Notes
An RNA of 177 nucleotides, treated with DMS and 2A3 and read out base by base. The RNA was probed in 150 mM KOAc, 10 mM MgCl2 and 150 mM bicine (pH 8.5) at 24 C. For DMS, 4,912 sequencing reads were counted. The 2A3 profile rests on 8,744 reads. For DMS the reverse transcriptase was MarathonRT.
RNA sequence: GGGAACGACUCGAGUAGAGUCGAAAACUGACCAACGCCGACAAGGUGCUCUAUCCCGCCACCGGGACCACAAAGUCCGAUAUCUUCGACUACUACGCCGGUGUUGCCGAAGUCAUGCUCGGCCACACUCGGACUAUAGAUUCGUCUAUAGUCCGAGAAAAGAAACAACAACAACAAC
Reactivity to DMS in 0.01 (KOAc 150mM, MgCl2 10mM, bicine 150mM(pH8.5), 24C), signal-to-noise 5, nucleotides 027 to 126: c100u000g010a120c070c020a080a090c090g010c030c010g010a090c140a100a120g010g010u000g000c050u000c070u010a140u010c020c010c010g000c100c060a060c070c020g010g010g030a070c070c050a070c150a080a100a100g000u000c040c030g010a100u000a060u010c100u000u000c040g000a040c020u000a090c050u000a040c100g010c070c040g010g010u000g000u000u000g010c000c010g010a040a050g000u010c200a090u010g000c230u000c010g000g010c000c050a070c110a130
Reactivity to 2A3 in 0.01 (KOAc 150mM, MgCl2 10mM, bicine 150mM(pH8.5), 24C), signal-to-noise 4, nucleotides 027 to 126: c010u040g050a040c020c020a090a050c030g020c020c010g040a110c080a140a060g040g020u030g010c000u000c000u030a110u030c010c000c010g070c080c020a030c030c020g040g000g030a060c030c010a070c050a060a150a010g030u080c080c030g030a040u040a080u150c090u060u020c010g020a020c010u110a090c010u030a010c090g080c070c030g030g010u020g020u030u050g010c000c010g010a020a010g020u070c040a030u120g020c010u000c010g000g010c010c010a020c000a000